The record gives the reactivity of an RNA of 177 nucleotides to 2A3 and DMS. Source: RMDB libraries RFM100 and RFMREP, as collected in RNAgym.

RNA sequence: GGGAACGACUCGAGUAGAGUCGAAAACUCACUUGAUUUUGAUUUUCAGUAUGAAUACAAACCGUGAAAGCGUGGCCUAUCGAUCCUUUAGUUCUUUUGAAUUUUAAGCUAGAGGUGUCAGAAAAGUGUUAGUACAAUAUUUCGAUAUUGUACUAACAAAAGAAACAACAACAACAAC
Reactivity to 2A3 in 0.01 (KOAc 150mM, MgCl2 10mM, bicine 150mM(pH8.5), 24C), signal-to-noise 9, nucleotides 027 to 126: c010u020c030a020c020u050u110g070a100u140u060u080u110g140a170u070u050u010u040c020a020g070u110a150u220g070a030a010u100a090c040a020a060a030c020c020g020u050g090a110a040a020g040c030g030u060g050g040c010c020u080a090u090c030g030a040u040c000c000u010u030u000a020g020u080u060c030u020u120u070u060g070a120a110u090u120u070u160a050a010g000c000u010a010g000a000g030g020u070g030u050c060a040g090a030a080a010a000g040u030
Reactivity to DMS in 0.01 (KOAc 150mM, MgCl2 10mM, bicine 150mM(pH8.5), 24C), signal-to-noise 6, nucleotides 027 to 126: c040u000c010a060c090u010u000g010a070u000u010u000u010g010a130u000u010u000u000c020a110g010u000a090u000g000a070a060u010a090c070a030a050a070c110c050g000u000g010a070a080a090g000c060g020u010g010g010c040c030u000a080u000c060g000a040u000c030c000u000u000u000a020g010u000u010c090u000u000u010u020g020a090a080u010u020u010u000a050a070g000c010u000a030g000a020g000g010u010g010u000c060a100g000a050a100a070a070g010u010